[RMDB]
RNA sequence: GGGAACGACUCGAGUAGAGUCGAAAAGGCUGCGAAGAGGGUGGCAGUACAACAGUGGCGUAUUCGAGAAGUGGCCUUCGAGCACCUGCCGCUAGAUCAAGCACUUCUGUCAAAUGGCGUUGCGGAGGCAGCGUGAAAUAUUCGUAUUUCACGCUGCAAAAGAAACAACAACAACAAC
Reactivity to DMS in 0.01 (KOAc 150mM, MgCl2 10mM, bicine 150mM(pH8.5), 24C), signal-to-noise 3, nucleotides 027 to 126: g000g010c010u010g000c000g020a050a090g020a080g000g010g000u000g000g010c050a040g010u010a040c070a040a120c140a100g010u030g000g010c020g000u020a080u020u000c050g010a100g000a020a100g000u010g020g030c040c020u000u020c090g000a080g030c040a040c080c030u010g000c000c000g000c020u000a060g010a040u040c090a070a080g000c050a040c050u030u010c020u020g000u030c070a040a070a100u030g000g010c120g000u000u000g020c020g000g000a110g000
Reactivity to 2A3 in 0.01 (KOAc 150mM, MgCl2 10mM, bicine 150mM(pH8.5), 24C), signal-to-noise 3, nucleotides 027 to 126: g030g000c010u010g030c040g070a100a050g020a080g070g040g040u080g000g000c010a000g000u050a070c050a120a000c000a160g050u050g060g000c010g020u050a110u030u120c060g040a020g030a210a000g050u060g060g050c010c000u020u030c030g010a010g020c010a010c050c050u040g060c020c000g010c000u000a000g010a110u050c100a020a040g030c010a020c050u070u030c020u030g090u010c060a070a060a060u060g000g000c020g030u010u070g010c020g010g030a010g090